[RMDB]
RNA sequence: GGGAACGACUCGAGUAGAGUCGAAAAGAUAUGGAUUGCGAACUACCCUCGCUAAAGCGUUGAAAUAUGUAGCAUUUCGGAAACGAAAUGCUACAUAUGGAGCUUUAGGAGGGCGCAAUCCUAAGUCCUACUGUUUUAGCUUCGGCUAAAACAGUAGAAAAGAAACAACAACAACAAC
Reactivity to 2A3 in 0.01 (KOAc 150mM, MgCl2 10mM, bicine 150mM(pH8.5), 24C), signal-to-noise 1, nucleotides 027 to 126: g060a000u190a060u250g000g010a000u000u000g000c000g040a110a040c020u230a170c300c090c060u020c050g300c280u000a000a000a000g000c010g300u300u050g040a060a100a010u010a020u020g000u020a000g000c000a000u010u030u020c000g060g030a080a120a050c040g040a000a000a000u010g010c010u000a000c020a000u000a010u000g000g000a010g000c000u000u010u000a020g000g020a010g020g000g040c000g000c000a000a000u010c000c000u030a070a020g040u070c010
Reactivity to DMS in 0.01 (KOAc 150mM, MgCl2 10mM, bicine 150mM(pH8.5), 24C), signal-to-noise 2, nucleotides 027 to 126: g030a110u000a240u020g010g000a030u000u010g030c000g010a070a090c090u010a300c000c010c030u000c010g050c000u000a010a000a010g000c000g010u000u030g000a130a130a000u000a000u000g010u010a000g000c000a020u000u020u010c000g020g000a140a070a280c000g030a000a020a010u010g010c000u010a000c000a000u000a000u000g000g010a100g010c000u000u000u000a000g010g000a020g020g010g010c010g000c000a000a000u000c000c000u000a010a150g000u000c050
Description: Structure probing data (2A3 and DMS) for a 177-nucleotide construct. Conditions: 150 mM KOAc, 10 mM MgCl2 and 150 mM bicine (pH 8.5), 24 C. For 2A3 the reverse transcriptase was SuperScript II with manganese. High DMS reactivity at an A or C suggests that its Watson-Crick edge is free. The data come from the RNA Mapping Database (RMDB), library TTRINS.